The record gives the reactivity of an RNA of 177 nucleotides to 2A3 and DMS. The data come from the RNA Mapping Database (RMDB), library OK1LIB. The RNA was probed in 150 mM KOAc, 10 mM MgCl2 and 150 mM bicine (pH 8.5) at 24 C.

[RMDB]
RNA sequence: GGGAACGACUCGAGUAGAGUCGAAAAUCGACAAGAAACCGCUGAAGACAAGAAAGUGCGCAUGGAAUUUGACGUACGUGAGGAAAAAUGAUUGGCCUGAGGCACAUCAAAUGCACGAGGGGGAUGCCCUUAUAUGCACCUUCGGGUGCAUAUAAGGAAAAGAAACAACAACAACAAC
Reactivity to 2A3 in 0.01 (KOAc 150mM, MgCl2 10mM, bicine 150mM(pH8.5), 24C), signal-to-noise 4, nucleotides 027 to 126: u060c000g020a020c030a050a010g060a050a090a010c020c020g010c070u090g050a110a060g030a030c020a110a040g080a120a150a010g100u070g030c060g000c030a060u060g060g130a140a120u140u030u110g120a120c050g000u050a020c020g030u090g010a040g020g080a080a040a030a100a050u200g010a050u050u090g040g050c010c020u030g020a080g000g080c040a010c000a050u140c040a070a130a050u100g000c030a050c150g020a090g000g000g010g000g010a020u060g020c000
Reactivity to DMS in 0.01 (KOAc 150mM, MgCl2 10mM, bicine 150mM(pH8.5), 24C), signal-to-noise 5, nucleotides 027 to 126: u000c050g010a110c100a060a060g000a060a100a100c070c030g030c040u020g020a060a080g020a100c100a050a070g020a130a070a080g000u000g010c040g000c040a040u010g010g010a100a050u030u000u010g020a080c050g010u010a030c050g020u010g030a110g000g010a010a030a020a120a070u020g010a070u020u030g000g000c040c040u020g000a120g020g010c040a050c040a040u000c110a040a040a060u020g000c060a020c080g000a090g000g000g000g010g000a110u010g010c170